[RMDB]
RNA sequence: GGGAACGACUCGAGUAGAGUCGAAAAGAUAUGGAUCCACCCAGCUUUUGACGAGCUCUGGGUCGGAAACGACCCUGAGCUCGAUAAGCUGGGUGGAUCCUAAGUCAAACACGAGUUCGCUCGUGAAGUAUAAUCCUUAGUUCGCUAAGGAUUAUACAAAAGAAACAACAACAACAAC
Reactivity to DMS in 0.01 (KOAc 150mM, MgCl2 10mM, bicine 150mM(pH8.5), 24C), signal-to-noise 5, nucleotides 027 to 126: g010a070u010a300u010g000g000a020u000c000c000a010c010c000c000a010g020c010u000u000u000u010g010a200c230g020a030g030c000u010c000u000g010g000g040u000c010g010g000a060a080a170c020g010a020c000c000c000u000g000a030g000c000u000c000g010a020u010a020a020g010c000u000g000g000g050u000g000g000a000u000c000c000u000a010a080g010u000c030a160a150a290c010a010c010g000a020g020u000u010c290g020c000u000c000g010u000g000a070a130
Overview:
The data come from the RNA Mapping Database (RMDB), library TTRDES. Structure probing data (DMS) for a 177-nucleotide construct. DMS adducts were read by reverse transcription with MarathonRT. Reactivities are given for positions 27 through 126.